This 177-nucleotide RNA was probed chemically with 2A3 and DMS. For DMS, 6,738 sequencing reads were counted. Source: RMDB library OK2TST, as collected in RNAgym. As a SHAPE reagent, 2A3 marks flexible, mostly unpaired nucleotides at the ribose 2'-OH.
[RMDB]
RNA sequence: GGGAACGACUCGAGUAGAGUCGAAAAUCAAUAUCGACUUGUGUGAAUUCAGGUUGACGAUCUGCACGUAAAUCUUCGUCACGGAAGCAUUUUACGAUUUGGUAGUAUUUGUCAAAUCCACUAAUCAAGUGUUAACAGGAUUCGUCCUGUUAACACUAAAAGAAACAACAACAACAAC
Reactivity to 2A3 in 0.01 (KOAc 150mM, MgCl2 10mM, bicine 150mM(pH8.5), 24C), signal-to-noise 6, nucleotides 027 to 126: u070c010a030a060u060a090u160c050g070a040c050u060u040g010u030g020u050g140a090a110u180u120c050a060g130g000u020u020g010a000c000g010a010u000c000u020g020c000a010c040g010u010a010a020a030u000c020u010u020c020g180u140c080a010c100g090g000a020a010g020c090a070u030u040u000u040a020c040g030a070u120u030u130g100g000u010a010g010u020a070u030u060u160g020u000c000a000a000a050u030c020c010a040c060u110a080a080u160c110a090
Reactivity to DMS in 0.01 (KOAc 150mM, MgCl2 10mM, bicine 150mM(pH8.5), 24C), signal-to-noise 7, nucleotides 027 to 126: u010c120a110a090u010a130u010c100g000a050c060u000u000g020u000g000u000g010a090a130u000u010c160a070g020g020u000u000g010a030c010g010a020u000c010u000g000c020a190c020g000u000a000a020a020u000c000u000u000c010g010u010c300a120c300g000g000a030a010g010c300a050u010u000u000u000a020c020g010a260u000u010u010g020g010u000a020g000u010a040u000u000u010g030u010c020a020a050a120u010c030c040a050c110u000a070a080u000c100a070